The data come from the RNA Mapping Database (RMDB), library RFM100.
An RNA of 177 nucleotides, treated with 2A3 and read out base by base.
Reactivities are rounded to 0.1 and cut off at 0 and 3.
[RMDB]
RNA sequence: GGGAACGACUCGAGUAGAGUCGAAAACCGCCUCCAGAUCAAGGGAAGUCCCGCGAGGGACAAGGGUAGUACCCUUGGCAACUGCACAGAAAACUUACCCCUAAAUAUUCAAUGAGGAUUUGAUUCGCCACGAAAAUUUCUUCGGAAAUUUUCGUGGAAAAGAAACAACAACAACAAC
Reactivity to 2A3 in 0.01 (KOAc 150mM, MgCl2 10mM, bicine 150mM(pH8.5), 24C), signal-to-noise 1, nucleotides 027 to 126: c010c010g090c000c000u000c000c020a000g010a160u010c050a010a010g010g000g000a070a000g050u020c080c000c000g010c050g000a060g010g010g000a000c000a010a000g040g010g000u030a120g020u180a160c000c000c000u000u000g050g000c000a020a090c020u030g030c060a050c010a040g160a060a090a030a020c010u060u060a110c000c000c000c000u070a040a200a070u160a170u030u170c090a030a060u090g040a040g000g120a020u070u000u130g060a070u080u000c030g000